This 207-nucleotide RNA was probed chemically with DMS and 2A3. Source: RMDB library RNAMAK, as collected in RNAgym. 2A3 adducts were read by reverse transcription with SuperScript II with manganese. Conditions: 150 mM KOAc, 10 mM MgCl2 and 150 mM bicine (pH 8.5), 24 C.

RNA sequence: GGGAACGACUCGAGUAGAGUCGAAAAGCGUACUACUUGACAUGACCUUAUGUAAGUUCGAUAAGAUACCUCCCAAAUAGGAGGUAUCUUUUGACGAAUUAUGUAAAGGUCAACAGCAAGUAUCGCAAAUCCAGUGAACGUUCGCGUUCACUGGAAAGCUUAUUAAGUGGUUCGCCACUUAAUAAGCAAAAGAAACAACAACAACAAC
Reactivity to DMS in 0.01 (KOAc 150mM, MgCl2 10mM, bicine 150mM(pH8.5), 24C), signal-to-noise 3, nucleotides 027 to 156: g030c010g030u010a050c080u000a010c000u010u000g020a110c080a300u010g020a020c000c000u000u000a030u000g010u000a010a010g010u010u000c010g030a240u000a000a030g010a020u000a000c000c000u000c000c000c030a050a170a250u010a040g000g020a020g010g020u000a000u000c000u000u000u000u000g010a300c100g010a000a060u000u000a020u000g010u000a020a050a100g060g000u000c010a030a060c070a140g010c010a030a050g000u010a020u000c000g010c010a050a110a150u000c000c000a010g030u000g010a020a010c010g030u000u010c300g050c050g000u000u000c000a000c000u000g000g000a000a000a080
Reactivity to 2A3 in 0.01 (KOAc 150mM, MgCl2 10mM, bicine 150mM(pH8.5), 24C), signal-to-noise 9, nucleotides 027 to 156: g020c020g030u120a090c050u010a010c000u060u020g070a110c020a110u040g010a020c010c000u050u020a020u030g020u020a030a160g120u100u010c030g020a070u020a070a000g000a000u000a000c000c000u030c010c010c050a160a240a050u300a070g000g000a000g000g000u010a000u000c000u000u010u010u020g010a000c010g000a000a010u010u000a000u010g020u010a060a120a120g010g000u020c000a000a000c010a010g040c000a000a020g020u020a050u300c010g000c010a050a030a030u000c000c000a000g020u020g000a000a000c000g010u070u070c260g020c000g140u000u000c020a000c000u000g000g000a010a010a000